RNA sequence: GGGAACGACUCGAGUAGAGUCGAAAACCAGGACUUCGGUCCUGGAAAGGCAUGAAAAUGUCGGGCCUGACGAACCCGCGCACCCGAGUCCCCCAGUUGGGGAAGAAAAGAGGGGUUUCGACCCCUCCAACGGUAUCUGAUUCGUCAGAUACCGUUGAAAAGAAACAACAACAACAAC
Reactivity to 2A3 in 0.01 (KOAc 150mM, MgCl2 10mM, bicine 150mM(pH8.5), 24C), signal-to-noise 1, nucleotides 027 to 126: c010c000a010g000g000a000c030u070u090c270g150g010u000c000c000u000g010g000a050a040a010g040g000c050a040u070g060a050a040a070a050u060g030u040c030g020g010g030c010c010u010g000a040c000g010a030a020c000c000c000g040c040g000c050a040c040c010c020g000a030g090u040c000c010c010c010c000a030g060u290u300g060g000g020g020a000a050g100a010a120a040a010g000a030g000g030g010g030u000u110u090c130g030a070c000c010c000c000u010c020
Reactivity to DMS in 0.01 (KOAc 150mM, MgCl2 10mM, bicine 150mM(pH8.5), 24C), signal-to-noise 2, nucleotides 027 to 126: c000c000a010g010g000a020c000u000u010c180g060g000u000c000c000u000g010g010a010a030a090g000g000c010a000u030g000a070a070a150a060u000g010u000c000g040g000g010c020c020u000g020a070c050g000a160a140c010c010c030g020c150g010c120a100c010c020c010g000a060g010u000c010c010c000c010c020a200g000u010u010g020g020g010g010a070a060g010a080a080a060a090g010a010g020g000g040g010u000u010u000c160g020a110c010c010c010c010u010c010
Source information: An RNA of 177 nucleotides, treated with 2A3 and DMS and read out base by base. High 2A3 reactivity points to a flexible backbone, as in loops and unpaired stretches. The RNA was probed in 150 mM KOAc, 10 mM MgCl2 and 150 mM bicine (pH 8.5) at 24 C. DMS adducts were read by reverse transcription with MarathonRT.